The record gives the reactivity of an RNA of 207 nucleotides to 2A3 and DMS. The RNA was probed in 150 mM KOAc, 10 mM MgCl2 and 150 mM bicine (pH 8.5) at 24 C. The data come from the RNA Mapping Database (RMDB), library OK3TST.
RNA sequence: GGGAACGACUCGAGUAGAGUCGAAAAAUACAAAAAUUAGCCAGGUGUGGUGGCACAUGCCUGUAAUCCCAGCUACUUGGGAGGCUCAGGCAGGAGAAUCGCUUGAACCCGGGAGGCGGAGGUUGCAGUGAGCCAACAUCAUACCACUGUACUCCAGUCUAAAGUUCAAGUUCGCUUGAACUUUAGAAAAAGAAACAACAACAACAAC
Reactivity to 2A3 in 0.01 (KOAc 150mM, MgCl2 10mM, bicine 150mM(pH8.5), 24C), signal-to-noise 1, nucleotides 027 to 156: a010u190a040c070a020a050a040a010a020u160u070a060g060c010c030a020g100g000u020g000u010g010g020u030g010g000c050a040c020a070u070g000c050c010u030g000u040a000a000u000c000c000c000a010g040c110u280a160c030u100u010g000g000g010a060g080g000c100u000c030a000g000g010c010a020g030g000a110g030a080a040u130c030g010c040u030u050g040a080a040c010c020c000g010g010g000a020g000g030c010g010g000a030g030g000u040u040g030c020a020g000u000g020a040g060c040c040a050a000c030a030u090c010a000u000a070c040c020a000c010u010g000u020a040c030u010c010c000a000g030
Reactivity to DMS in 0.01 (KOAc 150mM, MgCl2 10mM, bicine 150mM(pH8.5), 24C), signal-to-noise 1, nucleotides 027 to 156: a080u010a160c040a030a050a020a080a200u000u070a100g020c050c110a100g040g030u000g040u000g010g040u020g000g050c060a100c050a030u010g010c020c040u010g010u000a080a110u010c080c000c000a080g010c070u010a050c160u000u000g010g010g000a030g030g000c030u000c120a060g000g020c030a130g020g020a100g010a070a030u000c040g030c020u020u010g010a030a050c040c000c050g020g000g010a100g020g030c050g040g010a050g000g000u020u010g000c010a040g030u000g000a090g030c070c040a040a160c040a080u020c040a160u000a080c060c010a030c030u000g030u010a020c030u010c030c000a170g020